RNA sequence: GGGAACGACUCGAGUAGAGUCGAAAAUGUGAGUUUACGCGUUGUUUCAAUGGACUUCUUUGUUGCUCUUGUAUGGUUAUGGAUAUAGGAUCAUUGUCGCCAAUGCUUUGAUCGUUUGAAGAACGUGAUAAGUUGAUGACUUUUUUUGAUUUGUGUUGAGAAUACAUAAGUUCGCUUAUGUAUUCUCAAAAGAAACAACAACAACAAC
Reactivity to 2A3 in 0.01 (KOAc 150mM, MgCl2 10mM, bicine 150mM(pH8.5), 24C), signal-to-noise 8, nucleotides 027 to 156: u150g040u050g030a090g050u070u110u180a100c100g020c050g030u020u010g010u000u020u020c040a070a070u080g070g010a060c030u040u010c000u070u100u080g050u040u040g020c010u000c000u050u040g040u050a050u060g030g030u070u070a060u110g050g020a030u040a020u040a140g070g010a020u040c020a040u030u070g030u040c010g010c040c020a060a060u100g010c000u000u010u010g000a000u000c010g040u010u010u090g180a200a150g040a060a010c010g000u010g010a010u010a050a000g010u030u040g050a070u050g020a050c000u090u070u030u040u010u060u100g110a150u050u040u070g060u010g030u010u020
Reactivity to DMS in 0.01 (KOAc 150mM, MgCl2 10mM, bicine 150mM(pH8.5), 24C), signal-to-noise 3, nucleotides 027 to 156: u010g020u000g010a090g010u000u000u010a090c100g020c140g010u000u000g010u000u000u000c050a070a170u000g020g020a080c020u010u000c020u020u010u000g020u000u000g010c010u010c040u010u000g010u010a100u010g010g010u000u000a110u000g020g020a120u000a090u000a100g020g020a030u000c020a060u000u010g020u000c060g020c040c060a050a130u000g020c020u000u000u010g010a200u000c010g020u010u000u000g030a130a210g020a060a020c010g030u000g010a190u000a020a030g030u000u000g010a110u000g010a050c010u000u000u000u010u000u000u020g010a090u000u000u000g030u010g010u000u000

Structure probing data (2A3 and DMS) for a 207-nucleotide construct. The data come from the RNA Mapping Database (RMDB), library PDB130. For DMS the reverse transcriptase was MarathonRT. The reactions ran in a buffer of 150 mM KOAc, 10 mM MgCl2 and 150 mM bicine (pH 8.5), at 24 C. The 2A3 profile rests on 8,783 reads.